Chemical mapping of a 207-nucleotide RNA with DMS and 2A3. The RNA was probed in 150 mM KOAc, 10 mM MgCl2 and 150 mM bicine (pH 8.5) at 24 C. It was measured as part of the RMDB library OK3TST. For DMS, 5,082 sequencing reads were counted.
RNA sequence: GGGAACGACUCGAGUAGAGUCGAAAAGAGUACACACACUCGUGUGUACGUGAGAGUUCUCUCACACACACGUGAGUUCACUCGUGUGAGAGUACGAGUUCACGAUCUCGAGUGUGAUCGUACGUGUGAUCUCGAACACGAACACGUGUGUGUGUUCGCUUUCGACUAGAUUCGUCUAGUCGAAAGCAAAAGAAACAACAACAACAAC
Reactivity to DMS in 0.01 (KOAc 150mM, MgCl2 10mM, bicine 150mM(pH8.5), 24C), signal-to-noise 2, nucleotides 027 to 156: g010a140g030u000a000c000a020c020a000c020a260c120u000c180g040u020g000u000g010u040a020c050g020u000g020a130g000a140g020u000u000c050u010c040u080c000a010c030a070c000a040c060a050c060g010u000g000a140g010u000u000c110a120c120u000c000g050u030g070u000g010a180g000a070g000u020a020c000g010a130g010u000u000c080a050c010g010a030u000c000u000c030g020a100g040u000g020u020g000a020u000c000g020u000a040c040g000u010g010u000g020a100u000c010u000c000g030a210a070c020a000c050g000a140a180c030a020c020g000u000g010u020g000u000g030u010g000u000u010c030
Reactivity to 2A3 in 0.01 (KOAc 150mM, MgCl2 10mM, bicine 150mM(pH8.5), 24C), signal-to-noise 7, nucleotides 027 to 156: g100a030g000u010a010c010a030c010a000c010a020c130u240c190g000u000g000u000g000u010a030c010g000u090g050a140g000a000g000u020u010c020u000c000u000c010a000c000a000c000a000c000a000c020g010u020g030a060g080u190u210c120a060c110u010c030g000u000g000u010g010a030g000a000g000u040a010c020g010a030g090u080u150c100a020c020g030a040u010c040u050c090g150a160g080u300g030u060g070a010u000c010g010u010a050c080g040u080g040u070g130a150u040c000u000c010g030a050a000c020a000c010g010a070a000c010a000c010g000u020g010u010g000u010g000u000g020u060u040c040